About this RNA:
Chemical mapping of a 177-nucleotide RNA with DMS and 2A3. Conditions: 150 mM KOAc, 10 mM MgCl2 and 150 mM bicine (pH 8.5), 24 C. It was measured as part of the RMDB library OK1LIB.

RNA sequence: GGGAACGACUCGAGUAGAGUCGAAAAUCUGUGAGGUGGGAGGAAAGCGUGGCUUCUGUGCUACUGGCCCAUAGUUGGAGCCUACCACCCAUCUGAGAGUGGGCGCCAUUCCUCAAGGCUGUGUAGCGCUUUGUAACGUGUUCGCACGUUACAAAGCAAAAGAAACAACAACAACAAC
Reactivity to DMS in 0.01 (KOAc 150mM, MgCl2 10mM, bicine 150mM(pH8.5), 24C), signal-to-noise 2, nucleotides 027 to 126: u000c040u010g010u000g030a060g060g000u010g000g030g000a120g020g000a090a080a090g010c070g000u000g000g000c000u010u020c070u010g060u010g020c020u000a000c000u010g010g000c000c000c050a200u060a110g000u020u000g000g000a070g000c000c000u010a000c020c110a140c070c010c060a080u010c160u020g000a050g000a120g020u000g020g020g010c030g000c020c020a130u010u010c040c010u000c150a220a080g000g000c030u000g000u030g000u000a090g040c090
Reactivity to 2A3 in 0.01 (KOAc 150mM, MgCl2 10mM, bicine 150mM(pH8.5), 24C), signal-to-noise 3, nucleotides 027 to 126: u040c050u020g130u070g100a050g000g090u060g030g150g000a070g030g020a160a080a000g120c060g010u000g060g000c000u020u010c000u110g160u090g000c010u000a010c010u010g070g000c010c000c000a030u110a080g030u000u060g000g000a000g000c000c000u030a040c000c050a030c070c000c020a050u020c110u110g040a080g020a010g030u070g000g020g000c000g020c000c010a050u100u020c000c000u030c090a060a080g010g020c040u010g000u010g050u120a020g020c000